[RMDB]
The record gives the reactivity of an RNA of 207 nucleotides to 2A3 and DMS.
It was measured as part of the RMDB library OK3TST.
For 2A3 the reverse transcriptase was SuperScript II with manganese.

RNA sequence: GGGAACGACUCGAGUAGAGUCGAAAACAGAUGAUGUGUGGAGGAAACAAUCCAUGUGAGAAGGGGUUGAGGAGAGGUAGUCUGGCAGAGGCUACAGCAAGUAUGGAGGCAUUGGAGUCACAGUGGGUUAUGGUGUGCACAAAAGCAGCAGGAAGGAAUUUAUUUAGCCUUUCGAGGCUAAAUAAAUAAAAGAAACAACAACAACAAC
Reactivity to 2A3 in 0.01 (KOAc 150mM, MgCl2 10mM, bicine 150mM(pH8.5), 24C), signal-to-noise 4, nucleotides 027 to 156: c020a000g080a060u080g020a020u060g080u020g010u050g050g030a040g000g050a150a040a010c030a000a040u010c040c030a080u100g040u040g040a100g030a090a040g030g020g000g000u040u060g030a050g020g030a040g000a010g050g020u020a020g010u020c040u040g070g000c050a040g010a020g120g000c030u050a020c010a030g040c040a000a100g020u050a080u100g050g010a040g010g020c020a020u000u090g050g010a010g010u050c020a010c030a050g020u030g020g020g000u030u020a010u020g010g020u020g030u050g020c020a030c030a080a120a020a040g020c030a000g010c010a010g040g020a020a010g010g020a020
Reactivity to DMS in 0.01 (KOAc 150mM, MgCl2 10mM, bicine 150mM(pH8.5), 24C), signal-to-noise 3, nucleotides 027 to 156: c050a130g010a100u000g020a100u020g020u000g040u000g030g010a100g010g010a080a080a040c060a090a080u000c030c040a100u000g000u000g000a060g020a110a100g010g010g030g030u000u000g000a120g030g020a100g020a080g020g040u000a040g040u010c020u000g020g050c080a090g010a110g030g000c020u000a060c030a070g000c030a050a090g020u010a040u000g030g010a080g010g000c060a130u000u010g020g020a090g010u010c000a070c090a060g000u010g000g000g010u000u000a070u000g000g030u000g020u000g000c050a090c080a030a080a060a110g020c010a070g040c060a050g020g010a060a060g020g010a090